[RMDB]
Structure probing data (DMS and 2A3) for a 177-nucleotide construct. Source: RMDB libraries RFM100 and RFMREP, as collected in RNAgym. Conditions: 150 mM KOAc, 10 mM MgCl2 and 150 mM bicine (pH 8.5), 24 C. For DMS the reverse transcriptase was MarathonRT. For 2A3 the reverse transcriptase was SuperScript II with manganese.
RNA sequence: GGGAACGACUCGAGUAGAGUCGAAAAGGACCAGGAUGAUGACUGGCCAAAUCCAGCUGGUGAUGGAGCCGGAGGCGCGCGGUGACCGGAGGCGGUGGCCUGUCGUGCUGGCAGAAAUUGCGGAGCAACAUGGGAUAGAGUUCGCUCUAUCCCAUGUAAAAGAAACAACAACAACAAC
Reactivity to DMS in 0.01 (KOAc 150mM, MgCl2 10mM, bicine 150mM(pH8.5), 24C), signal-to-noise 9, nucleotides 027 to 126: g000g000a130c020c010a030g010g020a130u030g010a090u020g010a100c020u000g000g000c010c010a060a110a110u020c020c020a080g020c030u000g010g010u010g010a070u010g000g010a300g000c030c020g000g000a130g000g010c030g010c010g000c050g000g010u000g000a050c050c010g000g000a100g010g020c020g010g020u000g000g010c030c010u010g020u010c020g030u010g000c020u000g010g000c040a060g000a080a060a050u010u000g020c050g000g020a090g010c090a120
Reactivity to 2A3 in 0.01 (KOAc 150mM, MgCl2 10mM, bicine 150mM(pH8.5), 24C), signal-to-noise 8, nucleotides 027 to 126: g050g020a110c010c010a010g070g030a120u190g030a050u150g060a080c010u010g010g010c010c000a060a070a010u050c010c000a020g010c010u040g010g110u040g020a030u050g020g030a020g000c010c010g060g040a060g040g040c020g000c000g000c010g020g020u050g070a130c000c000g040g020a060g030g050c040g000g020u020g030g000c000c010u030g020u060c010g010u040g030c020u060g010g010c010a010g160a050a100a020u090u070g020c020g020g050a030g020c010a010